An RNA of 177 nucleotides, treated with DMS and 2A3 and read out base by base.
RNA sequence: GGGAACGACUCGAGUAGAGUCGAAAAGGUAAGCUAAUCCGAAAAAGUGUUCCUUAGUUCGGAUUGCAGGCUGCAACUCGCCUGCAUGAAGCCGGAAUCGCUAGUAAUCGCAGGUCAGCUAUACUGCGGAGCCUAAGACUUUCGAGUCUUAGGCUCCAAAAGAAACAACAACAACAAC
Reactivity to DMS in 0.01 (KOAc 150mM, MgCl2 10mM, bicine 150mM(pH8.5), 24C), signal-to-noise 2, nucleotides 027 to 126: g000g000u000a020a040g010c020u010a110a000u020c000c000g010a010a040a050a160a110g010u000g010u000u000c010c010u030u020a100g030u040u020c010g040g000a080u000u000g000c000a050g000g020c000u000g030c180a090a120c140u040c170g010c000c010u000g000c000a020u010g010a300a070g000c130c120g000g000a080a030u010c090g040c000u010a130g030u040a060a060u000c030g000c070a050g000g000u000c040a070g000c080u000a040u020a070c030u000g000c260
Reactivity to 2A3 in 0.01 (KOAc 150mM, MgCl2 10mM, bicine 150mM(pH8.5), 24C), signal-to-noise 3, nucleotides 027 to 126: g050g000u040a040a000g010c020u030a050a030u010c000c000g050a000a000a000a060a030g090u080g020u060u040c000c000u080u070a030g040u040u170c010g000g000a020u000u010g000c000a010g000g000c010u070g040c070a050a110c040u070c160g000c000c000u000g010c010a000u050g030a020a010g020c020c010g030g030a010a040u120c060g010c060u000a030g060u130a100a040u040c050g020c080a010g010g030u010c000a000g000c030u070a110u040a260c010u030g070c030

The reactions ran in a buffer of 150 mM KOAc, 10 mM MgCl2 and 150 mM bicine (pH 8.5), at 24 C. Source: RMDB libraries RFM100 and RFMREP, as collected in RNAgym.